[RMDB]
RNA sequence: GGGAACGACUCGAGUAGAGUCGAAAACAACUCGAUGAAGAGCGUCAGCGGACGGCCUCCGAGACGAGCGAUGGACAGUAGAGCUUCUGCUCCUACCAGUCGCGUGCUGACUCUCGCGCCCACCCGCACGGCUGCUCCGAGAGGAGUGCUCUCUGCCGGUGCUUAUUUAGUUCGCUAAAUAAGCACCAAAAGAAACAACAACAACAAC
Reactivity to 2A3 in 0.01 (KOAc 150mM, MgCl2 10mM, bicine 150mM(pH8.5), 24C), signal-to-noise 5, nucleotides 027 to 156: c030a010a010c010u020c020g240a280u090g040a100a040g000a000g010c010g010u020c030a020g010c000g020g000a010c020g010g010c000c010u000c000c010g000a000g010a000c000g030a050g080c000g010a020u080g000g000a000c000a010g010u020a000g000a010g020c020u300u170c180u300g010c000u090c050c010u010a000c000c000a000g010u000c010g000c010g010u000g010c200u020g000a010c010u000c000u000c000g020c020g010c010c010c000a060c010c000c030g000c040a070c140g010g020c090u270g000c000u010c000c000g020a030g010a010g030g020a020g020u040g020c010u010c000u010c030u080g090c070c080
Reactivity to DMS in 0.01 (KOAc 150mM, MgCl2 10mM, bicine 150mM(pH8.5), 24C), signal-to-noise 2, nucleotides 027 to 156: c050a090a150c020u000c020g030a180u000g020a170a070g010a020g060c020g020u000c030a220g000c000g010g010a180c130g010g000c030c000u000c030c020g000a180g030a040c010g000a130g030c030g000a080u000g020g000a050c020a050g020u020a040g010a100g000c020u000u000c260u020g020c010u030c090c030u000a000c000c010a070g000u010c000g030c020g000u000g030c170u000g010a060c260u000c030u010c020g000c070g000c000c010c020a190c190c000c000g000c020a100c020g060g040c000u030g040c010u000c020c000g010a230g000a100g000g010a140g020u000g020c060u000c090u000c030u000g010c260c070